[RMDB]
RNA sequence: GGGAACGACUCGAGUAGAGUCGAAAACAACUGUUAUUUUGCCACUGCAUUGUUAACACUCCAACAAAUAGAGUUGAAGUUUAAUCCACCUGCUCUACAAAGGGCUGGUGAAGCUGCUAACUUUUGUGACGUACAGUCUUCGGACUGUACAAAAGAAACAACAACAACAAC
Reactivity to DMS in 0.01 (KOAc 150mM, MgCl2 10mM, bicine 150mM(pH8.5), 24C), signal-to-noise 7, nucleotides 027 to 129: c080a100a070c190u000g000u010u000a060u020u000u020u020g030c010c110a060c160u030g000c070a030u020u020g020u050u040a040a030c030a050c040u000c000c050a010a000c130a080a120a100u110a100g040a090g040u000u000g010a080a040g000u020u000u060a020a010u000c050c010a000c000c030u000g030c020u020c020u010a090c300a110a170a050g050g020g000c000u020g010g010u000g030a010a020g030c020u030g040c060u010a040a070c040u050u030u020u040g040u030g040a100c150
Reactivity to 2A3 in 0.01 (KOAc 150mM, MgCl2 10mM, bicine 150mM(pH8.5), 24C), signal-to-noise 9, nucleotides 027 to 129: c010a000a030c040u030g040u090u040a130u070u090u120u140g050c030c070a110c110u130g000c040a050u080u070g050u050u050a060a010c020a010c060u000c030c020a040a010c020a020a200a120u270a070g130a010g030u010u020g030a020a010g000u020u040u100a070a050u070c030c000a010c010c010u030g010c000u000c000u050a120c110a070a230a080g010g000g000c000u020g000g000u010g010a000a000g000c020u040g000c010u010a020a030c000u040u030u010u040g080u060g070a030c060
This 170-nucleotide RNA was probed chemically with DMS and 2A3. It was measured as part of the RMDB library 15KLIB.